[RMDB]
About this RNA
The record gives the reactivity of an RNA of 177 nucleotides to 2A3 and DMS. In probing experiments dimethyl sulfate is read out at A N1 and C N3, which are open when not base-paired. It was measured as part of the RMDB library OK1LIB.
RNA sequence: GGGAACGACUCGAGUAGAGUCGAAAAGAGUUACGAAAUAAUGUUACUCGUGAAAAGGCUUCACACGCACGGAAAAGUGACGUGCGUCGGAAGCUCAAGACGACGCAUGUUACUGGAAUUUAAGAAAGGGAAUAACAAUCUUCGGAUUGUUAUUCCCAAAAGAAACAACAACAACAAC
Reactivity to 2A3 in 0.01 (KOAc 150mM, MgCl2 10mM, bicine 150mM(pH8.5), 24C), signal-to-noise 3, nucleotides 027 to 126: g040a000g000u000u130a000c060g060a060a100a230u270a170a070u250g000u000u080a030c000u000c020g010u010g030a040a040a000a000g150g000c040u050u020c000a020c000a000c060g000c010a020c080g010g040a100a050a000a020g040u050g000a000c000g000u000g000c020g000u000c020g000g030a000a000g040c000u000c010a030a010g060a000c000g000a000c000g060c000a000u020g000u070u000a000c020u040g000g150a050a180u120u170u100a070a170g060a170a090a020
Reactivity to DMS in 0.01 (KOAc 150mM, MgCl2 10mM, bicine 150mM(pH8.5), 24C), signal-to-noise 2, nucleotides 027 to 126: g010a070g000u000u000a050c000g010a100a080a120u010a060a130u050g020u000u000a020c030u010c000g020u000g000a060a030a050a210g000g000c040u000u020c050a040c060a060c020g000c080a060c110g000g020a090a070a080a040g000u010g010a010c010g010u000g000c000g020u000c050g000g000a070a120g010c110u020c170a100a100g000a080c010g000a000c030g000c020a000u010g010u000u000a000c010u000g000g000a020a050u040u050u020a100a110g000a030a070a130